Structure probing data (2A3 and DMS) for a 177-nucleotide construct.
The RNA was probed in 150 mM KOAc, 10 mM MgCl2 and 150 mM bicine (pH 8.5) at 24 C.
DMS adducts were read by reverse transcription with MarathonRT.
The data come from the RNA Mapping Database (RMDB), library RFM100.
Reactivities are given for positions 27 through 126.
As a SHAPE reagent, 2A3 marks flexible, mostly unpaired nucleotides at the ribose 2'-OH.

RNA sequence: GGGAACGACUCGAGUAGAGUCGAAAAUAGGAACCGUAGGGGUAUUCUCAAAGGAAGCUUUUGCAGUGACGCCCAUGUAAGUGGGAUAUAACAACAGAACUCGUAUGAGUAGCCUAAUUCUGCAACCACACGGUCGUAUUUUCGAAUACGACCGUGUAAAAGAAACAACAACAACAAC
Reactivity to 2A3 in 0.01 (KOAc 150mM, MgCl2 10mM, bicine 150mM(pH8.5), 24C), signal-to-noise 2, nucleotides 027 to 126: u090a040g000g020a070a070c030c000g020u040a010g000g010g000g090u020a220u120u010c010u020c010a070a060a000g040g000a070a090g030c050u060u090u060u160g010c040a020g010u000g000a050c100g010c000c000c000a010u080g100u130a260a150g010u030g020g000g000a010u010a020u020a020a070c090a000a080c000a010g090a050a000c000u000c020g100u140a090u210g020a000g040u030a040g000c010c000u020a030a030u050u020c030u070g130c030a100a090c050c010
Reactivity to DMS in 0.01 (KOAc 150mM, MgCl2 10mM, bicine 150mM(pH8.5), 24C), signal-to-noise 2, nucleotides 027 to 126: u000a070g000g010a180a090c050c060g000u080a050g000g000g000g010u040a010u010u030c020u030c060a040a190a060g000g020a130a020g000c080u000u040u000u000g000c040a110g000u020g000a170c250g000c000c000c000a000u000g000u050a010a170g000u010g000g020g000a000u000a080u070a210a060c140a170a140c190a030g000a010a050c000u000c070g050u010a150u020g030a000g000u000a080g010c000c020u000a050a180u050u000c080u000g000c080a070a080c100c090